[RMDB]
RNA sequence: GGGAACGACUCGAGUAGAGUCGAAAAGCGUACUACUAUGGAGUAUGAGCGAAGAACACCUGAACUACCUGAUCCCAAAUAGGAUCAGGCAGGUGGGAGCUCAUAUCCAUAGUAUCGCAAACAUCCCUAGCCCAACUUCGGUUGGGCUAGGGAUGAAGGCGUAUUAUGUGUUCGCACAUAAUACGCCAAAAGAAACAACAACAACAAC
Reactivity to 2A3 in 0.01 (KOAc 150mM, MgCl2 10mM, bicine 150mM(pH8.5), 24C), signal-to-noise 2, nucleotides 027 to 156: g000c000g050u080a070c050u000a000c000u010a020u010g000g030a060g270u090a000u010g000a010g010c000g060a300a060g010a050a030c000a000c010c000u040g020a070a100c080u090a100c300c000u010g000a000u040c030c010c070a150a300a090u250a170g000g000a000u000c000a010g000g010c010a000g000g000u000g000g000g000a000g000c000u000c010a000u010a000u000c000c000a010u010a000g000u000a000u000c010g000c000a020a020a020c000a000u000c010c020c000u010a000g000c000c000c000a000a040c000u030u040c290g140g000u010u000g020g000g000c010u000a010g000g000g020a000u000g010a010a010